[RMDB]
RNA sequence: GGGAACGACUCGAGUAGAGUCGAAAACAAUGAUUUAAGGGUGGAUGGUGCUUCCAUAACUUUUACAAGUGUUAACCUCUUUGCUAGCUUUUUUCCAAUGGCCCAUAAUACAUGUUCAACACUAGAAGCAAUGCUGAGAAAUGAUGUCAAUGACCAAGAACAUGAACUCUUUCGAGAGUUCAUGUUCAAAAGAAACAACAACAACAAC
Reactivity to 2A3 in 0.01 (KOAc 150mM, MgCl2 10mM, bicine 150mM(pH8.5), 24C), signal-to-noise 4, nucleotides 027 to 156: c030a010a140u150g050a070u060u110u210a060a070g000g010g000u030g020g030a040u030g020g030u030g030c000u040u020c020c000a110u070a210a130c030u100u070u090u200a060c090a100a050g010u010g040u120u070a060a050c000c000u000c040u000u030u040g040c020u010a070g030c030u110u070u030u020u070u040c040c000a060a130u030g020g000c010c000c020a040u110a100a040u110a060c030a040u120g020u040u090c040a030a050c020a020c090u040a030g020a040a000g030c030a040a110u060g010c030u040g020a020g030a060a090a050u090g040a040u040g030u110c040a050a040u110g020a030c120c010a060a050
Reactivity to DMS in 0.01 (KOAc 150mM, MgCl2 10mM, bicine 150mM(pH8.5), 24C), signal-to-noise 2, nucleotides 027 to 156: c030a130a180u000g000a110u010u000u010a090a090g000g010g050u000g000g030a080u000g010g020u000g010c080u000u020c010c050a050u010a050a110c060u000u000u000u000a100c090a070a180g010u020g000u000u010a060a150c060c040u000c020u000u000u000g010c030u010a160g000c030u000u000u000u000u000u000c030c030a150a180u010g020g010c020c040c020a080u000a060a100u010a080c050a030u000g020u010u000c030a030a050c030a030c030u000a060g020a090a150g020c050a040a040u000g000c030u010g010a090g020a070a080a060u000g000a110u010g060u000c010a060a120u040g010a070c040c020a050a300
Chemical mapping of a 207-nucleotide RNA with 2A3 and DMS. The 2A3 profile rests on 1,676 reads. It was measured as part of the RMDB library OK3TST. Values cover nucleotides 27 to 156. The reactions ran in a buffer of 150 mM KOAc, 10 mM MgCl2 and 150 mM bicine (pH 8.5), at 24 C.